[RMDB]
RNA sequence: GGGAACGACUCGAGUAGAGUCGAAAACCCACCAAGUUCUUAUCAAGAGAAGCAGAGAAACUGGUUCGACGAAGCUUCAGCAACCGGUGUAAUGGCGAAAGCCAUGACCAAGGUGCUAAAUCCAGCAAGCUCGAACAGCUUGGAAGAUAAGAACAGACACUGAUGCAUGGUUCGCCAUGCAUCAGUGAAAAGAAACAACAACAACAAC
Reactivity to 2A3 in 0.01 (KOAc 150mM, MgCl2 10mM, bicine 150mM(pH8.5), 24C), signal-to-noise 2, nucleotides 027 to 156: c010c000c000a030c010c020a140a050g010u000u010c000u000u000a010u030c080a210a020g030a040g000a110a010g000c070a020g050a000g000a230a160a000c090u100g070g000u060u050c000g030a020c020g030a260a050g030c020u150u070c060a000g000c000a020a050c000c020g000g020u060g120u220a080a080u000g000g000c010g040a050a000a000g000c000c000a000u000g010a000c000c010a090a100g000g000u010g010c000u030a010a020a100u040c040c020a010g020c010a120a000g020c030u000c010g060a070a040c030a030g010c010u000u090g040g030a040a000g010a020u020a000a000g000a000a010c000a000g000a000